Overview
The record gives the reactivity of an RNA of 177 nucleotides to DMS. It was measured as part of the RMDB library OK2TST. The reactions ran in a buffer of 150 mM KOAc, 10 mM MgCl2 and 150 mM bicine (pH 8.5), at 24 C.
RNA sequence: GGGAACGACUCGAGUAGAGUCGAAAAGCGACAAGGUCGUCAUCGGAGGCCUUACCGGCAUCGGCACCGCUGCUGGCGAAGCUGACUCCAAGACCUCCAAGUUCGGCUCAGGCCUGAAGGGCGUCGGCAACACUUAGCUCUUCGGAGCUAAGUGUUGAAAAGAAACAACAACAACAAC
Reactivity to DMS in 0.01 (KOAc 150mM, MgCl2 10mM, bicine 150mM(pH8.5), 24C), signal-to-noise 4, nucleotides 027 to 126: g000c050g010a040c070a130a180g010g000u010c060g000u000c080a080u000c160g020g000a070g030g000c050c010u000u000a100c060c050g000g020c060a060u000c030g010g010c150a090c160c020g020c100u000g020c090u000g020g020c040g020a040a090g010c050u010g010a110c070u000c060c040a080a100g010a030c010c010u000c000c010a110a230g000u010u000c010g010g000c030u010c090a130g020g000c000c030u000g020a070a050g010g000g010c100g000u000c010g010g000